Structure probing data (2A3 and DMS) for a 177-nucleotide construct. For 2A3, 110,359 sequencing reads were counted. 2A3 adducts were read by reverse transcription with SuperScript II with manganese. The reactions ran in a buffer of 150 mM KOAc, 10 mM MgCl2 and 150 mM bicine (pH 8.5), at 24 C.
[RMDB]
RNA sequence: GGGAACGACUCGAGUAGAGUCGAAAAGAUCUGAUGCAGUGUCGUCUGGCAGGUGUCAGGUUGAAGCCCUGGGCUGUGUGUGGAAGUACUUGCACGAUGAGUACGCUGCACCAGAUGAUCAGGCAUGCGCUGAUUCAACGUUCGCGUUGGAUUAGCGAAAAGAAACAACAACAACAAC
Reactivity to 2A3 in 0.01 (KOAc 150mM, MgCl2 10mM, bicine 150mM(pH8.5), 24C), signal-to-noise 9, nucleotides 027 to 126: g020a010u000c000u010g000a000u010g000c010a090g250u000g010u040c080g080u080c140u250g010g000c000a010g010g010u010g010u010c000a000g000g000u010u040g040a030a010g030c000c000c000u010g010g040g000c010u010g040u020g000u000g010u030g260g040a240a180g030u020a010c000u010u020g030c090a070c250g200a300u160g010a000g010u000a000c010g000c010u000g000c000a000c000c000a000g010a060u100g020a050u110c010a010g030g000c040a040u140g040
Reactivity to DMS in 0.01 (KOAc 150mM, MgCl2 10mM, bicine 150mM(pH8.5), 24C), signal-to-noise 9, nucleotides 027 to 126: g000a020u000c000u000g010a010u000g010c000a030g010u010g030u000c010g010u030c200u050g010g010c010a030g000g020u000g010u010c010a020g010g010u000u010g000a060a080g020c120c000c010u000g000g000g010c000u000g000u040g010u010g020u000g000g000a060a120g020u000a000c000u000u000g010c090a170c230g010a150u010g000a020g010u010a020c020g010c000u000g000c000a010c000c000a010g000a060u020g010a080u020c020a030g000g010c050a150u040g010
Description: For DMS, 124,878 sequencing reads were counted. Values cover nucleotides 27 to 126.